[RMDB]
RNA sequence: GGGAACGACUCGAGUAGAGUCGAAAACGCUGGGUUUCGAACUACAACAUAAAUAAGGGAGCUGAAGCGCGCACGGCGAAGAACUUAUGUGUUGCGAAACCUGUGCUGAAGCGCGCACGGCAACCGAAAGGUGCGAAUGGCCUCGUUCGCGAGGCAAACCCUUUUCUAACUUCGGUUAGAAAAGGGUAAAAGAAACAACAACAACAAC
Reactivity to 2A3 in 0.01 (KOAc 150mM, MgCl2 10mM, bicine 150mM(pH8.5), 24C), signal-to-noise 4, nucleotides 027 to 156: c050g000c020u070g020g000g010u000u000u000c030g030a090a050c070u300a040c180a020a010c010a020u160a190a300a050u040a060a010g060g020g000a050g000c000u030g050a170a020g010c000g000c000g000c020a020c030g000g020c000g050a140a030g010a060a000c020u020u010a030u040g030u010g010u030u050g060c000g000a010a000a000c000c010u010g060u040g000c020u070g020a130a050g000c020g000c000g000c010a010c030g060g000c040a090a040c000c010g030a080a020a020g000g020u030g010c050g050a100a150u200g100g000c020c030u020c010g040u090u040c130g000c020g120a010g000g000c000a030a030
Reactivity to DMS in 0.01 (KOAc 150mM, MgCl2 10mM, bicine 150mM(pH8.5), 24C), signal-to-noise 1, nucleotides 027 to 156: c060g030c020u000g020g010g060u000u000u000c000g000a090a300c030u000a120c020a010a000c000a100u020a070a130a210u000a010a040g020g000g000a200g000c010u000g010a050a070g040c000g020c010g040c000a300c030g020g060c000g000a040a130g000a090a160c100u010u000a010u000g030u000g010u000u000g000c000g000a040a010a020c010c000u000g030u000g020c000u000g010a150a030g050c010g050c020g040c010a120c000g040g050c050a070a290c030c040g000a040a080a190g010g000u010g010c000g000a120a140u000g010g000c000c000u000c000g000u000u010c190g050c030g040a000g010g040c000a010a020